[RMDB]
RNA sequence: GGGAACGACUCGAGUAGAGUCGAAAAUGUGAGAGAAUGAAGCUGCCAGCAUGAUCUGGUUGUCAGGCAUGAGCCAAAUCUAUCCAUGGUGUUGGUGGUACUGAAAUUACCGCGUUUUCGAGGUUUUUGAUGAUAUUAUGUUCGCAUAAUAUCAUCAAAAAGAAACAACAACAACAAC
Reactivity to DMS in 0.01 (KOAc 150mM, MgCl2 10mM, bicine 150mM(pH8.5), 24C), signal-to-noise 3, nucleotides 027 to 126: u010g000u000g010a170g000a170g000a050a040u020g000a170a080g010c030u000g010c000c020a030g000c020a040u010g010a180u010c160u010g000g000u000u000g010u000c050a280g000g010c070a100u010g010a120g000c010c010a020a060a070u000c030u020a030u010c000c060a030u000g000g010u010g000u000u000g010g010u000g000g000u020a020c080u020g000a080a090a030u010u000a030c010c000g000c020g020u000u000u000u000c030g010a250g010g000u020u000u010u000
Reactivity to 2A3 in 0.01 (KOAc 150mM, MgCl2 10mM, bicine 150mM(pH8.5), 24C), signal-to-noise 3, nucleotides 027 to 126: u050g020u000g020a130g000a020g050a140a040u070g010a060a000g000c020u000g030c010c000a010g020c000a040u070g060a120u130c080u080g020g030u050u070g070u090c080a040g010g040c090a130u220g070a070g050c020c010a040a040a010u070c060u090a070u030c030c000a040u110g080g010u030g000u040u000g000g000u030g010g020u060a090c040u050g060a000a000a120u070u040a040c020c000g000c000g020u010u010u000u020c040g020a080g000g050u000u000u000u000